RNA sequence: GGGAACGACUCGAGUAGAGUCGAAAACUGAUGAGAUGCUGCAAGGGAAGAAACCCCAACAGAUAUACGGUACAAUCUUCCAGAUGGACCCCACGAGCGACUCGAAGAGCCUCAACAGGUACAGGGAUCCAUUUUUAGUCUUCGGACUAAAAAUGGAAAAAGAAACAACAACAACAAC
Reactivity to DMS in 0.01 (KOAc 150mM, MgCl2 10mM, bicine 150mM(pH8.5), 24C), signal-to-noise 3, nucleotides 027 to 126: c030u020g010a100u050g000a110g010a090u010g050c010u000g000c030a070a160g020g020g020a110a060g000a120a190a180c080c020c020c050a110a110c070a060g000a070u000a130u000a070c120g010g020u000a070c130a040a090u000c040u000u000c020c010a120g000a100u010g010g000a060c050c010c020c030a120c210g000a030g000c060g020a070c060u010c030g020a050a080g000a100g030c050c000u000c050a050a120c120a050g000g020u000a060c110a110g000g000g010a090
Reactivity to 2A3 in 0.01 (KOAc 150mM, MgCl2 10mM, bicine 150mM(pH8.5), 24C), signal-to-noise 1, nucleotides 027 to 126: c000u000g000a030u100g020a070g030a120u070g030c000u000g000c020a070a110g050g040g030a050a100g030a130a150a020c040c000c020c000a140a050c010a030g050a050u100a000u020a160c070g020g000u070a080c060a020a110u000c000u050u000c010c000a000g020a160u150g080g030a040c000c000c040c000a000c050g000a000g050c020g070a080c040u000c040g060a080a060g000a030g030c020c010u050c010a050a050c040a040g030g000u090a060c010a030g000g060g020a010